[RMDB]
RNA sequence: GGGAACGACUCGAGUAGAGUCGAAAAACUCUAACCAAAUAGACAUUGAAGCACAGCCACUGAGGAGAAGACGUUUAGAGAGAUUUCCUGCAGCUCUUUUAAUUGUUGCCCUUUUGCUACCAGCUGCGAGAAUACAUAGUUUCGACUAUGUAUUCUCAAAAGAAACAACAACAACAAC
Reactivity to DMS in 0.01 (KOAc 150mM, MgCl2 10mM, bicine 150mM(pH8.5), 24C), signal-to-noise 4, nucleotides 027 to 126: a080c050u000c030u020a080a110c070c060a070a080a110u010a070g000a080c070a080u010u000g010a100a080g010c060a050c080a080g000c040c030a070c070u010g010a080g000g010a080g000a050a060g000a060c100g010u010u000u000a030g000a100g000a090g000a120u000u000u000c030c010u000g010c050a060g000c020u000c030u000u000u010u010a040a090u000u000g010u000u000g010c030c050c040u000u010u000u000g010c070u000a070c090c090a070g000c020u000g010c150
Reactivity to 2A3 in 0.01 (KOAc 150mM, MgCl2 10mM, bicine 150mM(pH8.5), 24C), signal-to-noise 3, nucleotides 027 to 126: a000c030u010c030u030a070a050c020c040a010a120a170u150a040g100a030c050a070u050u160g040a090a000g030c020a020c020a040g040c040c000a040c040u060g040a030g040g050a070g030a100a050g070a040c040g020u050u040u070a100g010a000g000a000g000a050u030u070u100c020c000u040g040c020a040g020c020u020c000u100u190u060u170a110a120u110u160g050u060u080g090c000c010c000u030u090u090u120g030c010u050a090c030c040a020g050c020u030g030c030